RNA sequence: GGGAACGACUCGAGUAGAGUCGAAAACGGCCACAAGACGCUCCUGCCCCAGCUUGUGGAAACGCUGCGCAAAAAGGGUGCGGAAAACAUUAUCGUGGUCUGCGGCGGCGUCGUGCCGCGUCAGGAAGCUGGAGCAUAAUUUCGAUUAUGCUCCAGCAAAAGAAACAACAACAACAAC
Reactivity to 2A3 in 0.01 (KOAc 150mM, MgCl2 10mM, bicine 150mM(pH8.5), 24C), signal-to-noise 1, nucleotides 027 to 126: c040g020g020c000c020a010c010a010a050g090a020c040g000c070u000c000c010u060g070c000c000c000c000a040g040c020u110u070g000u040g130g000a010a030a000c040g000c050u060g030c010g000c070a000a070a050a050a000g050g040g010u140g000c020g030g020a020a080a000a000c060a030u140u170a090u210c050g020u040g020g030u000c080u090g080c040g080g000c000g040g000c000g040u200c040g020u080g010c010c010g000c030g030u050c010a030g000g110a070a060
Reactivity to DMS in 0.01 (KOAc 150mM, MgCl2 10mM, bicine 150mM(pH8.5), 24C), signal-to-noise 2, nucleotides 027 to 126: c070g010g000c010c000a020c020a060a080g020a110c190g000c080u000c120c000u000g030c010c010c000c010a070g010c180u000u000g050u000g010g000a100a130a100c100g020c030u000g030c080g050c110a020a020a070a290a120g000g000g020u010g030c020g000g020a030a050a120a050c090a110u020u000a170u020c070g030u000g000g030u000c000u000g010c050g010g010c000g000g040c020g030u000c150g030u000g000c010c020g010c020g000u010c040a090g000g000a110a080

An RNA of 177 nucleotides, treated with 2A3 and DMS and read out base by base. 2A3 adducts were read by reverse transcription with SuperScript II with manganese. It was measured as part of the RMDB library OK2TST. Reactivities are given for positions 27 through 126.